[RMDB]
RNA sequence: GGGAACGACUCGAGUAGAGUCGAAAAUACCGCAGGCCUGCGGUGCGGCAGUGUGGAGACCUGCCGUAAGCCGUGUUGUUUUGACAACCGGGAGAAAGCGUAUGCGGAGGCAGCGCUUUCAGGGUUUAAAAGUAUGGGAUCUUCGGAUCCCAUACAAGUAAUGGUGAUACUUCGGUAUCACCAUUACAAAAGAAACAACAACAACAAC
Reactivity to 2A3 in 0.01 (KOAc 150mM, MgCl2 10mM, bicine 150mM(pH8.5), 24C), signal-to-noise 2, nucleotides 027 to 156: u060a010c000c020g000c030a030g030g140c010c090u060g010c020g000g000u000g020c000g000g010c000a010g010u030g020u090g250g070a060g030a090c010c010u000g020c000c000g000u000a040a000g050c000c010g070u090g020u060u010g000u010u070u050u180g080a020c020a020a000c010c000g010g000g000a070g020a010a000a000g000c000g000u040a300u220g000c030g030g110a080g300g000c000a000g000c000g000c000u000u000u010c000a000g030g020g020u040u050u120a030a120a030a020g000u000a000u000g000g000g010a000u000c010u010u070c240g070g000a000u000c010c000c000a000u000a000c000a000a000
An RNA of 207 nucleotides, treated with 2A3 and read out base by base. As a SHAPE reagent, 2A3 marks flexible, mostly unpaired nucleotides at the ribose 2'-OH. Values are in units of 0.01, from 0 to 300, in steps of 10. Conditions: 150 mM KOAc, 10 mM MgCl2 and 150 mM bicine (pH 8.5), 24 C.